[RMDB]
RNA sequence: GGGAACGACUCGAGUAGAGUCGAAAAGAUAUGGACUAUCGUGCACAGCGAUGAGCUAACUCGGAAACGAGUUAGCGAGCUGGCACGAGUAGUCCUAAGUCAAACAUAACUACUUCGGUAGUUAUGACGGGUAAAGGUACUUCGGUACCUUUACCCGAAAAGAAACAACAACAACAAC
Reactivity to DMS in 0.01 (KOAc 150mM, MgCl2 10mM, bicine 150mM(pH8.5), 24C), signal-to-noise 1, nucleotides 027 to 126: g010a090u010a300u010g010g000a000c000u000a000u000c000g070u000g000c000a120c050a040g010c000g000a260u000g010a150g000c020u000a000a000c000u000c000g000g040a110a160a130c000g070a000g000u000u000a000g040c010g000a040g000c010u010g000g010c020a010c000g000a040g000u010a000g000u000c000c000u010a000a080g000u000c130a180a230a250c000a020u000a000a020c000u010a000c000u000u000c130g000g020u010a000g000u000u000a000u000g030a090
Reactivity to 2A3 in 0.01 (KOAc 150mM, MgCl2 10mM, bicine 150mM(pH8.5), 24C), signal-to-noise 1, nucleotides 027 to 126: g020a020u030a080u110g010g040a000c000u000a000u050c010g000u000g000c030a040c020a300g000c050g300a300u220g050a150g030c000u000a020a020c000u020c000g080g000a110a020a030c000g000a000g020u000u010a000g000c020g000a010g000c000u000g010g000c010a000c000g000a000g010u000a000g000u000c000c000u000a000a020g080u000c090a000a160a000c000a000u000a000a030c000u000a000c020u050u040c300g110g010u020a000g000u020u000a010u040g040a050

Structure probing data (DMS and 2A3) for a 177-nucleotide construct. For DMS, 878 sequencing reads were counted. Reactivities are given for positions 27 through 126. It was measured as part of the RMDB library TTRDES. The RNA was probed in 150 mM KOAc, 10 mM MgCl2 and 150 mM bicine (pH 8.5) at 24 C.